Source information
Chemical mapping of a 177-nucleotide RNA with DMS and 2A3.
[RMDB]
RNA sequence: GGGAACGACUCGAGUAGAGUCGAAAAUGGUACUGCGCAUUGGUUGUUUGCGACCCUUGUCUCAACCUAUGUGAUAAUCUUACAAGCCACUAAAUUUACUUUGUGGAACUACUUGUUUGAGACUAUUUUACUACUCCUAGUUCGCUAGGAGUAGUAAAAAAGAAACAACAACAACAAC
Reactivity to DMS in 0.01 (KOAc 150mM, MgCl2 10mM, bicine 150mM(pH8.5), 24C), signal-to-noise 2, nucleotides 027 to 126: u000g040g000u000a150c120u000g000c070g000c010a040u000u010g010g000u000u000g000u010u010u010g020c090g000a130c060c110c110u020u010g020u000c050u000c000a040a050c050c070u000a030u020g010u010g000a120u000a070a130u010c060u010u000a020c010a060a010g000c000c010a000c020u010a020a070a100u000u020u020a060c230u000u010u000g010u010g000g020a020a030c050u030a290c000u010u000g030u010u000u020g030a020g010a080c080u000a060u000u000
Reactivity to 2A3 in 0.01 (KOAc 150mM, MgCl2 10mM, bicine 150mM(pH8.5), 24C), signal-to-noise 2, nucleotides 027 to 126: u070g020g030u070a040c030u070g050c020g000c020a000u020u050g040g000u000u000g010u080u060u110g060c020g010a030c050c010c000u050u150g020u000c020u000c030a000a000c000c010u020a020u020g050u000g020a100u020a150a040u020c000u000u010a000c020a020a000g000c000c010a020c030u100a070a000a080u300u300u040a040c110u110u050u030g010u000g000g030a020a030c030u020a010c010u130u030g040u040u030u020g010a020g000a000c020u030a090u030u030
The data come from the RNA Mapping Database (RMDB), library 15KREP. DMS (dimethyl sulfate) methylates the pairing face of unpaired adenines and cytosines. For 2A3, 1,274 sequencing reads were counted. The RNA was probed in 150 mM KOAc, 10 mM MgCl2 and 150 mM bicine (pH 8.5) at 24 C.